[RMDB]
An RNA of 207 nucleotides, treated with 2A3 and read out base by base. Values cover nucleotides 27 to 156. For 2A3, 855 sequencing reads were counted. It was measured as part of the RMDB library M2RFPK.
RNA sequence: GGGAACGACUCGAGUAGAGUCGAAAAAUUCGCCGAGAAGCCUCGGUUCGAAAUCAUCGGGAGUGAUCCAGAUGACGGUCCUGCCAUGAGACCGCAACGAGAGCAUGUCGCAUCGAAUGGACUCGGGUAUACUAGGUGACGUUCGCGUCACCUAGAAGGUCUCCAUAUACUUCGGUAUAUGGAGACCAAAAGAAACAACAACAACAAC
Reactivity to 2A3 in 0.01 (KOAc 150mM, MgCl2 10mM, bicine 150mM(pH8.5), 24C), signal-to-noise 1, nucleotides 027 to 156: a010u080u080c030g010c030c010g020a010g030a060a000g060c020c030u010c030g000g000u020u070c090g030a070a020a050u010c000a010u000c050g000g010g010a030g030u120g050a100u010c000c000a020g060a130u070g030a040c020g030g000u010c010c010u040g100c000c030a080u040g010a010g000a180c000c010g040c020a010a060c090g040a030g020a010g120c040a090u140g060u120c070g000c080a060u050c080g020a000a030u060g010g020a020c020u010c040g000g000g010u120a040u030a150c000u000a000g000g000u000g010a000c020g020u020u010c210g020c000g110u010c000a000c000c000u000a000g000a000a000